[RMDB]
RNA sequence: GGGAACGACUCGAGUAGAGUCGAAAAGCUUUCUUUCUUCCAUUGACCCACUGCUCGAGGACGUCCUCCCUGUCUCCUCGGUUCUUCUUCGAUCCGGACCGGCUCAUCUCGGCAAAAGGCGGCAGUCAGAGUAUCGAGUUCGCUCGAUACAAAAGAAACAACAACAACAAC
Reactivity to 2A3 in 0.01 (KOAc 150mM, MgCl2 10mM, bicine 150mM(pH8.5), 24C), signal-to-noise 9, nucleotides 027 to 129: g030c070u110u200u060c030u070u220u020c020u150u040c080c040a110u020u130g020a020c010c020c020a070c050u010g010c000u010c010g000a020g020g090a190c010g010u010c000c000u050c010c000c000u010g030u000c020u010c010c010u020c010g030g010u040u020c010u120u020c010u070u100c060g060a080u000c020c020g010g030a060c010c000g010g000c010u010c020a110u020c040u020c020g010g000c020a040a070a040a040g030g010c000g010g000c010a000g030u070c040a020g020a020
Reactivity to DMS in 0.01 (KOAc 150mM, MgCl2 10mM, bicine 150mM(pH8.5), 24C), signal-to-noise 8, nucleotides 027 to 129: g020c270u050u070u080c080u020u060u020c000u000u000c080c030a020u030u060g020a100c050c030c130a090c070u000g000c050u030c000g030a050g030g040a140c100g030u000c010c000u030c020c020c010u000g000u000c030u000c030c030u020c010g040g000u000u000c010u010u010c060u000u000c110g060a080u040c000c010g000g020a100c070c070g000g020c060u020c060a060u030c050u020c040g000g000c000a050a050a070a090g030g020c060g020g030c080a070g020u010c030a050g020a140